Chemical mapping of a 177-nucleotide RNA with 2A3 and DMS. Source: RMDB library M2PK50, as collected in RNAgym. The 2A3 profile rests on 1,573 reads. The reactions ran in a buffer of 150 mM KOAc, 10 mM MgCl2 and 150 mM bicine (pH 8.5), at 24 C.
RNA sequence: GGGAACGACUCGAGUAGAGUCGAAAACCACCGAAGUUCGCUUCGGUGGAAAAGAUACCGGUCUCGGUAUCAAAGUGAGACCCUCAGACCACAGGAAACUGAAAACCGAUCCGUUCGCGGAUCGGAAUCUCUGUUACUUGUUCGCAAGUAACAGAGAAAAAGAAACAACAACAACAAC
Reactivity to 2A3 in 0.01 (KOAc 150mM, MgCl2 10mM, bicine 150mM(pH8.5), 24C), signal-to-noise 2, nucleotides 027 to 126: c000c010a000c000c000g030a020a000g020u040u080c080g110c120u000u000c000g000g000u040g000g000a000a000a000a040g040a000u000a000c030c030g120g140u210c300u140c230g000g000u020a020u030c040a020a040a000g140u060g040a070g060a030c000c020c000u020c000a090g020a170c020c030a070c060a090g030g080a100a090a040c010u060g070a020a040a080a110c000c000g010a010u000c000c000g040u040u040c270g000c050g060g010a000u000c000g000g010a000a000
Reactivity to DMS in 0.01 (KOAc 150mM, MgCl2 10mM, bicine 150mM(pH8.5), 24C), signal-to-noise 2, nucleotides 027 to 126: c000c000a000c000c010g000a000a010g010u020u020c300g020c010u000u000c020g000g030u000g000g000a000a000a060a110g000a000u000a020c030c000g010g000u020c220u000c040g010g000u000a020u000c010a030a040a100g000u000g020a040g010a130c020c000c010u000c050a070g000a110c080c080a110c100a070g000g000a050a100a100c060u020g000a080a070a100a220c000c000g000a000u010c010c010g020u000u000c210g020c000g010g020a020u010c020g000g010a020a010